[RMDB]
RNA sequence: GGGAACGACUCGAGUAGAGUCGAAAAGAAGUUGUGUUCGCACAACUUCAAAAGCUAGUAGGUACUGGGCAAGUAGUACCUAGUAGUUGCCCGUUCAAGUAAAAAUCAACCUCUUCGGAGGUUGAAAACGGUAAGUUUGAUUCGUCAAACUUACCGUAAAAGAAACAACAACAACAAC
Reactivity to 2A3 in 0.01 (KOAc 150mM, MgCl2 10mM, bicine 150mM(pH8.5), 24C), signal-to-noise 1, nucleotides 027 to 126: g000a000a000g000u000u000g010u010g020u020u080c180g100c030a000c000a000a000c000u010u010c010a000a000a000a000g000c000u020a010g050u000a000g120g000u000a000c010u030g060g120g100c090a080a050g110u100a010g000u010a070c000c010u010a000g020u000a010g000u020u080g030c000c000c030g010u080u150c160a140a060g040u110a130a080a020a060a100u010c010a000a010c000c000u000c010u110u120c300g040g030a000g000g000u010u000g010a000a000a000
Reactivity to DMS in 0.01 (KOAc 150mM, MgCl2 10mM, bicine 150mM(pH8.5), 24C), signal-to-noise 3, nucleotides 027 to 126: g010a020a000g010u010u000g020u000g010u000u020c170g040c000a010c000a000a010c000u010u010c000a030a050a130a080g010c000u000a000g000u000a020g000g000u000a000c000u000g020g000g040c280a090a200g000u010a030g010u000a000c010c000u000a010g000u000a010g000u000u000g000c000c000c020g020u000u020c200a080a080g010u000a010a070a090a120a110u000c000a010a000c000c000u000c000u000u020c140g010g000a010g010g000u010u000g000a000a020a060